The record gives the reactivity of an RNA of 177 nucleotides to DMS and 2A3. Source: RMDB library TTRDES, as collected in RNAgym. Conditions: 150 mM KOAc, 10 mM MgCl2 and 150 mM bicine (pH 8.5), 24 C. The DMS profile rests on 1,314 reads.

[RMDB]
RNA sequence: GGGAACGACUCGAGUAGAGUCGAAAAGAUAUGGACUACACUGUAGACAUGGAGGUGUUCGGAAACGAACACGCUCCAACAGCUAUUGUAGUCCUAAGUCAAAAGAUUUGGCCUUCGGGCCAAAUCAGAACCGUUAGAUCUUCGGAUCUAACGGUUCAAAAGAAACAACAACAACAAC
Reactivity to DMS in 0.01 (KOAc 150mM, MgCl2 10mM, bicine 150mM(pH8.5), 24C), signal-to-noise 2, nucleotides 027 to 126: g000a040u010a040u010g010g010a010c000u000a000c010a010c300u010g020u000a010g000a030c120a090u020g030g000a020g000g000u000g000u000u000c010g000g000a030a000a040c000g000a000a000c000a000c010g020c000u010c000c000a040a060c160a100g030c030u000a000u010u010g000u030a030g010u000c000c000u000a020a030g000u010c010a110a060a080a160g000a040u000u000u000g020g000c010c000u000u010c180g060g010g030c010c000a010a000a000u000c000a070
Reactivity to 2A3 in 0.01 (KOAc 150mM, MgCl2 10mM, bicine 150mM(pH8.5), 24C), signal-to-noise 1, nucleotides 027 to 126: g000a000u020a010u020g010g010a000c010u010a000c040a040c100u240g060u060a030g050a060c250a300u240g030g000a010g020g000u010g020u010u000c000g000g050a020a000a000c010g020a010a000c010a010c020g050c020u000c010c000a130a010c110a030g000c010u020a000u090u040g020u020a010g020u000c000c000u000a010a000g010u000c010a010a120a170a080g010a000u000u000u040g040g020c030c000u060u070c300g050g030g090c050c000a000a000a020u010c000a000

The 2A3 profile rests on 1,610 reads. Reactivities are given for positions 27 through 126.